[RMDB]
RNA sequence: GGGAACGACUCGAGUAGAGUCGAAAAAGCGUCCGGUGAGACGAGCCGAGUUCGCCGGAGACUCGUAAAACGCCGGCACCUAAACAUACACGCCAACGACAGAGAGAUGGCGCUGGCUGCCUAAAACCACUGGCAGCCCGUCGGUCCGGGCGGCCCAGUGGUACAGUCGGUUCGCCGACUGUACCACAAAAGAAACAACAACAACAAC
Reactivity to 2A3 in 0.01 (KOAc 150mM, MgCl2 10mM, bicine 150mM(pH8.5), 24C), signal-to-noise 3, nucleotides 027 to 156: a020g070c000g000u000c000c000g030g020u060g060a160g000a030c010g010a040g100c070c010g000a000g000u020u010c010g010c010c010g000g000a030g080a000c000u000c020g180u150a010a000a010a000c010g040c000c000g050g000c010a090c000c050u150a070a110a040c050a060u230a040c040a020c130g010c000c020a080a060c060g130a050c090a160g120a030g000a010g020a110u030g030g000c000g020c010u000g010g010c010u010g000c010c000u150a230a240a120a100c070c060a060c090u040g000g000c020a000g000c010c000c000g010u000c000g000g030u020c000c010g000g000g000c000g000g000c000c020c000a010

Chemical mapping of a 207-nucleotide RNA with 2A3. The data come from the RNA Mapping Database (RMDB), library ARCHII. For 2A3 the reverse transcriptase was SuperScript II with manganese. 2A3 is a SHAPE reagent: it acylates the 2'-hydroxyl of flexible nucleotides of all four kinds.